[RMDB]
RNA sequence: GGGAACGACUCGAGUAGAGUCGAAAAGAUAUGGACCACAGCGAUGAGUAUGAGGUCGGAAACGACCUAUACGAGCUGUGUCCUAAGUCAAAAGUGGGUUAUUGGCGUUCGCGCCAAUAACCCACAACUAAACACUAAACUUCGGUUUAGUGUUUAGAAAAGAAACAACAACAACAAC
Reactivity to 2A3 in 0.01 (KOAc 150mM, MgCl2 10mM, bicine 150mM(pH8.5), 24C), signal-to-noise 1, nucleotides 027 to 126: g040a020u080a040u120g020g000a030c080c080a010c130a000g000c000g300a300u240g030a100g080u020a030u100g300a050g000g000u000c050g000g000a100a100a020c000g000a010c000c000u020a010u000a000c000g030a000g000c000u000g000u000g020u010c000c000u010a100a060g020u050c030a000a020a090a110g010u020g060g000g000u010u040a020u030u000g020g050c030g060u080u050c270g040c050g000c050c040a010a000u030a010a000c000c000c000a000c010a010a000
Reactivity to DMS in 0.01 (KOAc 150mM, MgCl2 10mM, bicine 150mM(pH8.5), 24C), signal-to-noise 3, nucleotides 027 to 126: g010a020u000a300u010g000g000a020c160c090a020c010a000g000c000g000a090u000g030a200g000u000a020u000g000a010g000g010u000c010g020g010a070a070a200c000g010a000c000c000u010a030u000a000c010g000a080g010c000u000g010u000g010u000c000c000u000a040a090g010u000c030a080a040a120a130g020u000g010g020g010u010u000a010u000u000g000g020c010g050u000u010c210g010c030g000c000c000a010a000u000a010a010c000c000c000a000c010a000a090

This 177-nucleotide RNA was probed chemically with 2A3 and DMS. 2A3 adducts were read by reverse transcription with SuperScript II with manganese. The RNA was probed in 150 mM KOAc, 10 mM MgCl2 and 150 mM bicine (pH 8.5) at 24 C.